[RMDB]
RNA sequence: GGGAACGACUCGAGUAGAGUCGAAAAACAGGUCUACGGACCUGAACGGGCGUUAUGAUGGUGGCUACUGGCAAAAUAGUAGCUAAGUCUAGUUCGGAAGUUAUUUAUGGUUAGACAUAGAUGGCAACAAGUGAAGAGAUUUCGAUCUCUUCACUUGAAAAGAAACAACAACAACAAC
Reactivity to 2A3 in 0.01 (KOAc 150mM, MgCl2 10mM, bicine 150mM(pH8.5), 24C), signal-to-noise 7, nucleotides 027 to 126: a000c000a000g000g000u000c010u030a050c270g120g000a000c000c000u000g010a030a000c000g000g010g010c040g110u170u170a110u220g030a010u050g030g270u140g090g000c000u000a000c000u010g130g030c130a050a050a070a110u180a090g010u010a000g000c000u020a040a010g000u000c010u030a050g010u010u020c010g020g070a120a040g020u040u030a040u020u030u000a020u020g040g040u060u160a040g010a030c000a000u020a010g020a020u010g010g020c000a030a030
Reactivity to DMS in 0.01 (KOAc 150mM, MgCl2 10mM, bicine 150mM(pH8.5), 24C), signal-to-noise 8, nucleotides 027 to 126: a130c020a010g000g010u000c000u000a110c170g050g000a000c000c000u000g010a080a070c050g000g000g010c030g010u030u020a060u020g000a020u010g000g040u020g010g000c010u000a010c010u000g000g020c140a090a070a100a110u040a010g010u000a020g010c000u000a190a230g010u000c000u000a100g010u000u000c020g010g000a110a080g010u000u010a010u000u000u010a010u000g010g000u020u030a140g010a140c010a020u000a030g000a000u000g000g000c040a110a220
Source: RMDB libraries RFM100 and RFMREP, as collected in RNAgym.
An RNA of 177 nucleotides, treated with 2A3 and DMS and read out base by base.
For 2A3 the reverse transcriptase was SuperScript II with manganese.